[RMDB]
RNA sequence: GGGAACGACUCGAGUAGAGUCGAAAAGGUGACCGGAGGCCCCAGUCCUGCCGGGAGCCCCAGGGAGCGCGCUGUGGCCUCUCCGCUGAGCAGUGAGGCUGGAGGGCUCCUACGUCCUCCCAUGACUGAACCGUCGCUCUCGCGGUGCUGACUGCUACACUAAUUAUUAGUUCGCUAAUAAUUAGUGAAAAGAAACAACAACAACAAC
Reactivity to 2A3 in 0.01 (KOAc 150mM, MgCl2 10mM, bicine 150mM(pH8.5), 24C), signal-to-noise 2, nucleotides 027 to 156: g050g000u050g020a030c000c000g010g000a020g020g000c020c080c040c090a020g130u120c020c000u130g140c000c000g010g000g000a010g010c000c020c000c010a020g020g000g000a030g000c020g000c020g000c080u090g040u070g100g000c000c000u000c010u000c000c020g020c080u170g100a060g040c030a040g030u020g030a020g020g000c010u030g030g010a010g010g020g000c000u080c050c000u040a050c080g000u000c000c010u010c000c000c000a100u190g050a040c040u050g060a070a060c020c010g080u160c060g010c010u000c000u010c020g010c070g010g020u050g050c030u040g050a100c050u060g000c020u080a040
Reactivity to DMS in 0.01 (KOAc 150mM, MgCl2 10mM, bicine 150mM(pH8.5), 24C), signal-to-noise 2, nucleotides 027 to 156: g030g050u010g010a280c030c050g030g010a090g010g070c050c150c110c120a140g020u000c020c040u000g040c040c020g000g020g020a290g050c000c010c000c030a190g020g040g000a050g040c000g030c060g020c020u000g110u000g050g020c030c010u000c010u000c020c040g020c050u000g020a300g030c040a040g000u000g010a110g020g060c020u010g030g020a080g010g020g010c010u000c160c070u000a030c090g020u000c000c010u000c000c010c020a150u010g000a150c030u000g020a100a090c040c020g010u010c000g020c010u010c010u000c000g000c080g000g030u000g020c040u010g010a180c050u000g020c000u010a230